[RMDB]
RNA sequence: GGGAACGACUCGAGUAGAGUCGAAAAUGAAAUACCUAUGGUUUGAUACAUAAUAAAUUGUCCAUUAUGUUUUACAGACAACCGAAUAGGUUCGAUAAUCAAUACCCCCUUCUUCAUCAAGUCUGUAAGACUGUUACGAUUUCGAUCGUAACAGUCUAAAAGAAACAACAACAACAAC
Reactivity to DMS in 0.01 (KOAc 150mM, MgCl2 10mM, bicine 150mM(pH8.5), 24C), signal-to-noise 3, nucleotides 027 to 126: u020g000a070a120a100u030a070c000c010u000a010u010g000g000u010u000u020g020a140u050a010c010a000u020a020a030u000a050a090a140u040u040g000u020c210c150a000u000u000a000u000g010u000u040u000u050a070c110a040g000a090c080a060a030c040c030g000a070a020u000a010g000g000u000u000c230g020a080u010a060a060u010c110a050a100u030a200c060c030c000c030c070u010u000c080u020u000c020a060u010c040a080a070g000u000c000u000g000u010a120
Reactivity to 2A3 in 0.01 (KOAc 150mM, MgCl2 10mM, bicine 150mM(pH8.5), 24C), signal-to-noise 6, nucleotides 027 to 126: u140g020a050a030a020u170a010c000c000u010a050u030g020g010u040u060u110g070a070u120a050c000a000u020a030a000u090a050a160a130u230u240g120u110c090c020a010u010u000a000u010g000u000u070u030u070a050c020a030g060a030c010a020a020c010c020g090a090a100u030a030g020g000u000u060c030g040a040u090a170a100u130c060a010a050u150a210c010c000c010c000c080u080u040c030u060u020c050a130u050c040a070a140g040u000c010u010g030u050a070